[RMDB]
RNA sequence: GGGAACGACUCGAGUAGAGUCGAAAACCCUCGCACUAGUUCCGCUGUGGGUUCGCCUACAAGAACGUACGGUGUUGAGGCCCUGUCCGCUGCUGCGCUGCCACCUACUCUUGGCGCCGCUAGUCGAUCAACUUACUUCCUUCGGGAAGUAAGUUGAAAAAGAAACAACAACAACAAC
Reactivity to 2A3 in 0.01 (KOAc 150mM, MgCl2 10mM, bicine 150mM(pH8.5), 24C), signal-to-noise 1, nucleotides 027 to 126: c000c000c000u000c000g020c000a020c010u010a030g030u010u020c000c020g020c030u000g000u000g030g020g000u040u000c230g050c030c000u010a000c020a020a170g000a030a010c000g000u080a020c100g000g000u000g000u130u300g010a000g020g000c030c000c020u020g050u060c030c070g020c010u030g000c020u050g000c050g010c010u050g040c040c030a140c000c020u170a170c040u060c020u160u110g000g020c000g000c010c010g020c070u070a010g000u070c010g060a100
Reactivity to DMS in 0.01 (KOAc 150mM, MgCl2 10mM, bicine 150mM(pH8.5), 24C), signal-to-noise 1, nucleotides 027 to 126: c290c000c000u000c000g000c010a050c000u000a230g010u000u000c010c020g010c070u030g000u000g000g020g010u000u010c220g000c010c000u010a010c020a040a080g010a030a000c000g010u000a070c190g000g020u000g010u010u010g010a030g000g010c030c000c010u000g040u010c030c060g040c000u000g000c040u000g010c020g020c070u000g000c070c040a040c110c080u010a030c110u000c030u010u010g000g010c040g040c130c060g000c020u020a020g010u000c090g000a120